Chemical mapping of a 207-nucleotide RNA with DMS and 2A3. DMS adducts were read by reverse transcription with MarathonRT. Conditions: 150 mM KOAc, 10 mM MgCl2 and 150 mM bicine (pH 8.5), 24 C. It was measured as part of the RMDB library OK3TST.

[RMDB]
RNA sequence: GGGAACGACUCGAGUAGAGUCGAAAAGCAAAAGAGUUCACAAAAGAAUGUUAUAGGGGGAUGAUAGUAAAAAUUCUUGGUAGCCAAAAUGUCAUCUAUCUAUGUUAUGUCAUAUCUAUCUGUCUAAGAAUUAAGAAGUGAUAUGGUUAUCACAAAGGAUAAUGUUUCGAUUCGUCGAAACAUUAUCAAAAGAAACAACAACAACAAC
Reactivity to DMS in 0.01 (KOAc 150mM, MgCl2 10mM, bicine 150mM(pH8.5), 24C), signal-to-noise 3, nucleotides 027 to 156: g000c040a060a060a110a090g010a130g030u000u010c040a110c040a040a080a110a120g000a070a050u000g000u000u000a100u010a100g020g010g020g040g020a050u000g030a080u000a080g020u020a030a050a060a080a110u000u000c040u000u010g010g010u010a050g010c060c050a070a050a090a100u010g000u010c030a050u000c040u000a060u000c050u010a040u010g010u010u000a060u000g020u010c020a020u000a040u010c030u000a130u000c060u010g010u000c060u010a040a150g010a070a080u000u010a050a090g000a070a150g010u000g000a020u000a040u010g010g020u000u000a050u000c040a040c070a050a080a130g000
Reactivity to 2A3 in 0.01 (KOAc 150mM, MgCl2 10mM, bicine 150mM(pH8.5), 24C), signal-to-noise 7, nucleotides 027 to 156: g030c010a030a020a060a050g070a020g040u130u110c070a030c040a080a100a050a050g050a070a070u110g050u170u170a120u210a220g040g000g000g000g000a010u040g010a020u030a020g060u070a020a080a100a080a100u090u040c030u040u060g040g010u030a020g040c030c000a040a070a050a070u060g020u030c010a030u000c030u070a080u030c030u050a050u100g050u080u040a040u060g040u040c010a030u010a030u040c020u030a040u000c010u030g110u000c010u060a090a090g080a160a120u150u100a110a030g020a060a010g030u020g030a000u000a000u060g040g020u070u060a010u030c030a020c040a050a080a010g110